[RMDB]
Conditions: 150 mM KOAc, 10 mM MgCl2 and 150 mM bicine (pH 8.5), 24 C. This 170-nucleotide RNA was probed chemically with DMS and 2A3. 2A3 adducts were read by reverse transcription with SuperScript II with manganese. It was measured as part of the RMDB library 15KLIB. For DMS the reverse transcriptase was MarathonRT.
RNA sequence: GGGAACGACUCGAGUAGAGUCGAAAAUGAUUAUGUACCCCUAAAAUCUGCAGUCUGUAUUACAGCUUGUAAUUUAGGGGGCGCUGUUUGUAGGAAGCAUGCUACAGAGUACAGAGAGUAUAUGGAAUGAGGUAGAUGUUCGCAUCUACCAAAAGAAACAACAACAACAAC
Reactivity to DMS in 0.01 (KOAc 150mM, MgCl2 10mM, bicine 150mM(pH8.5), 24C), signal-to-noise 8, nucleotides 027 to 129: u030g020a110u000u000a030u070g030u020a140c050c030c010c020u000a020a010a020a050u000c160u010g010c020a010g010u000c010u000g030u020a190u050u060a080c020a010g020c050u000u000g000u010a040a050u000u000u000a080g040g010g010g020g070c050g000c050u030g030u000u010u010g040u010a060g000g000a060a050g000c140a090u000g030c030u000a040c030a040g020a070g000u000a040c080a030g030a090g000a090g040u020a040u000a050u060g000g000a080a030u040g000a180
Reactivity to 2A3 in 0.01 (KOAc 150mM, MgCl2 10mM, bicine 150mM(pH8.5), 24C), signal-to-noise 9, nucleotides 027 to 129: u060g010a020u080u090a070u240g090u290a240c000c000c000c000u000a010a020a000a060u040c070u050g000c010a010g080u030c000u010g060u070a240u170u300a090c000a010g010c000u050u050g010u010a010a030u000u000u010a020g000g000g020g000g000c010g000c010u080g040u080u090u060g080u040a020g000g070a070a040g080c050a030u150g030c000u010a010c010a010g020a020g040u020a030c050a010g030a000g000a010g080u040a050u030a030u170g080g050a090a090u060g020a040